Chemical mapping of a 177-nucleotide RNA with 2A3 and DMS. The reactions ran in a buffer of 150 mM KOAc, 10 mM MgCl2 and 150 mM bicine (pH 8.5), at 24 C.

RNA sequence: GGGAACGACUCGAGUAGAGUCGAAAAUCGGCAAAAUGCCCCCGUAACUUCGGGAGAAGGGGGGCCUCGUCUGGUGACGGAACUUGCUUCCUGAGCUGGGUGGGGCCGCAGAGACCAGAGAGAAGCGGUGUGCAGGAAGUUUCGACUUCCUGCACACAAAAGAAACAACAACAACAAC
Reactivity to 2A3 in 0.01 (KOAc 150mM, MgCl2 10mM, bicine 150mM(pH8.5), 24C), signal-to-noise 2, nucleotides 027 to 126: u030c000g000g000c010a040a000a040a170u160g010c000c000c000c000c000g030u030a020a020c020u040u090c130g070g020g040a120g000a060a040g030g010g000g000g000g000c000c000u000c000g070u000c000u000g120g030u140g010a030c020g020g020a000a010c010u120u300g090c050u050u000c000c000u050g010a000g000c040u070g000g010g010u000g000g010g000g010c000c000g000c000a010g010a000g030a110c030c000a060g060a000g000a000g030a100a020g080c060g020
Reactivity to DMS in 0.01 (KOAc 150mM, MgCl2 10mM, bicine 150mM(pH8.5), 24C), signal-to-noise 1, nucleotides 027 to 126: u050c140g040g110c000a050a260a100a220u000g020c110c000c000c000c040g000u000a190a160c060u000u060c000g000g090g020a060g000a110a120g000g000g040g020g000g050c000c000u000c020g000u000c000u050g020g000u000g000a300c300g000g000a000a000c000u010u010g010c150u000u000c000c000u000g000a230g000c000u000g000g000g000u000g000g000g000g000c000c000g000c080a000g000a060g000a140c020c000a160g000a260g000a060g000a060a140g040c060g000